[RMDB]
RNA sequence: GGGAACGACUCGAGUAGAGUCGAAAACAGCUAGGUUGUCACAUGAGUUUACUUGUAAUGAUUUUACCUAUAUUUUGCCAGCUCACCUACGGAUUCUUGGUCGUUAUAUUAUGUUAAUACAUCCAGAUCAACUCCAUAUGUUGCCUUUUGAGGUUGAUCGAGGCUAAAAAUUCGUUUUUAGCCUCGAAAAAGAAACAACAACAACAAC
Reactivity to DMS in 0.01 (KOAc 150mM, MgCl2 10mM, bicine 150mM(pH8.5), 24C), signal-to-noise 1, nucleotides 027 to 156: c060a120g000c080u000a050g030g020u000u010g010u010c020a050c060a080u000g030a120g050u000u000u000a090c050u020u020g030u030a070a080u030g000a080u000u010u010u000a060c010c020u000a080u000a130u000u000u000u000g000c040c060a140g010c090u000c030a060c040c010u010a060c070g000g010a050u000u000c010u000u000g040g020u000c090g010u000u010a050u000a070u020u000a080u000g020u000u000a070a050u000a070c040a080u000c040c030a140g020a050u000c030a030a070c040u000c020c010a080u000a110u000g020u000u010g010c010c100u000u000u000u000g020a060g000g010u000u010g010a130
Reactivity to 2A3 in 0.01 (KOAc 150mM, MgCl2 10mM, bicine 150mM(pH8.5), 24C), signal-to-noise 2, nucleotides 027 to 156: c030a010g050c050u080a040g070g010u060u030g050u060c000a020c000a060u070g030a100g050u150u230u180a120c020u080u020g000u130a140a060u050g080a080u070u060u050u080a060c020c030u040a090u020a140u300u120u110u050g000c000c000a010g000c010u020c010a080c020c050u060a040c020g070g000a060u110u090c050u070u090g020g000u050c030g050u100u020a090u000a060u300u060a090u150g030u000u090a000a010u080a130c020a020u050c070c010a010g010a050u010c000a010a050c040u000c020c010a020u050a080u220g090u080u030g050c000c020u210u150u020u080g080a020g030g000u050u040g000a030